RNA sequence: GGGAACGACUCGAGUAGAGUCGAAAAGAUAUGGAUCCGGAAGAAGCCGCUUGCCGAUGAAAUUGAGUACGUCGGAAACGACGUACUCAAUGGAGGCAAGAACUACGGUGUAAACGGAUCCUAAGUCGUGUGUUAUAAUCUUCGGAUUAUAACACACAAAAGAAACAACAACAACAAC
Reactivity to 2A3 in 0.01 (KOAc 150mM, MgCl2 10mM, bicine 150mM(pH8.5), 24C), signal-to-noise 2, nucleotides 027 to 126: g020a020u060a040u080g000g000a000u000c000c000g000g000a290a300g000a010a000g180c020c010g050c050u000u000g020c030c030g230a300u290g190a170a270a050u020u020g000a000g000u000a010c000g000u000c020g000g000a010a030a000c020g010a010c000g010u000a000c000u000c000a010a000u000g000g000a020g000g000c010a020a000g000a000a000c030u140a030c000g000g080u110g010u060a010a010a010c020g020g000a010u000c000c000u000a000a000g050u000c060
Reactivity to DMS in 0.01 (KOAc 150mM, MgCl2 10mM, bicine 150mM(pH8.5), 24C), signal-to-noise 4, nucleotides 027 to 126: g010a040u000a140u000g000g000a000u000c000c000g010g020a030a150g010a200a300g010c000c010g010c000u000u000g000c000c000g060a170u030g010a070a100a010u010u000g030a020g000u000a000c000g030u000c000g000g000a010a040a080c000g000a000c000g000u000a000c000u000c000a000a010u000g000g030a220g030g010c010a000a000g000a050a060c140u000a300c020g030g030u000g010u020a030a120a300c000g000g000a010u000c000c000u000a000a090g010u010c040
An RNA of 177 nucleotides, treated with 2A3 and DMS and read out base by base. DMS adducts were read by reverse transcription with MarathonRT. The RNA was probed in 150 mM KOAc, 10 mM MgCl2 and 150 mM bicine (pH 8.5) at 24 C. The 2A3 profile rests on 5,353 reads. Reactivities are given for positions 27 through 126.